[RMDB]
RNA sequence: GGGAACGACUCGAGUAGAGUCGAAAAGCUUUAGCUCAAGCAUCCAUGGAAGGGGCUCAGCACAGAAGGCUAGUCUCAUAAAACUGCUGAUGAUGUCUUCUAUUUCUGCCAUGAAACACGGGGGCUCCGGAUGGUUCCAAUUCGUUGGAACCAUCCGAAAAGAAACAACAACAACAAC
Reactivity to DMS in 0.01 (KOAc 150mM, MgCl2 10mM, bicine 150mM(pH8.5), 24C), signal-to-noise 1, nucleotides 027 to 126: g000c020u000u010u000a060g020c050u010c080a130a150g000c000a100u020c030c020a110u000g030g010a180a120g010g010g000g000c010u020c050a050g030c150a100c200a040g020a070a020g000g000c010u000a200g010u000c010u010c020a020u000a090a030a110a080c220u000g000c080u000g020a050u000g000a100u010g000u000c010u070u000c020u000a110u000u000u010c010u000g000c160c060a120u000g000a120a080a080c110a060c130g000g000g000g010g000c120u000c070

Chemical mapping of a 177-nucleotide RNA with DMS.